[RMDB]
RNA sequence: GGGAACGACUCGAGUAGAGUCGAAAAAUUCAGUACUCGAAGACGCGGCAGACAGGAAAAUGACAGUACAUCAUAUAUUCCACACACAGAAUCAAGUACCAGUUCCUCCAGCGUCGCAAUGUUAGAGGAAUGUAGCAAGAUUCGUCUUGCUACAUUCAAAAGAAACAACAACAACAAC
Reactivity to 2A3 in 0.01 (KOAc 150mM, MgCl2 10mM, bicine 150mM(pH8.5), 24C), signal-to-noise 9, nucleotides 027 to 126: a000u170u110c050a020g060u050a070c010u020c050g060a090a030g050a020c050g010c010g020g000c050a040g040a150c030a060g020g090a030a050a020a050u110g040a030c040a050g060u050a020c010a040u060c060a000u130a020u030a050u220u030c040c010a050c000a010c000a000c010a130g070a040a040u080c050a140a040g020u020a040c010c030a050g020u020u020c000c000u010c010c020a020g010c000g030u030c020g000c000a030a120u160g040u130u090a040g000a020g150
Reactivity to DMS in 0.01 (KOAc 150mM, MgCl2 10mM, bicine 150mM(pH8.5), 24C), signal-to-noise 7, nucleotides 027 to 126: a090u030u000c090a110g010u010a060c030u010c080g000a090a090g010a130c090g010c040g000g000c170a040g010a120c180a100g000g000a010a040a100a050u020g000a060c150a100g030u020a090c160a140u000c050a040u020a060u030a130u000u000c000c020a100c130a090c150a070c170a070g000a130a110u000c110a050a040g010u010a040c020c060a110g000u010u010c030c020u010c040c060a070g010c050g010u000c110g000c120a030a060u020g010u000u000a070g010a100g010
Conditions: 150 mM KOAc, 10 mM MgCl2 and 150 mM bicine (pH 8.5), 24 C. Structure probing data (2A3 and DMS) for a 177-nucleotide construct. It was measured as part of the RMDB library OK1LIB. For 2A3, 19,120 sequencing reads were counted. For DMS, 13,085 sequencing reads were counted.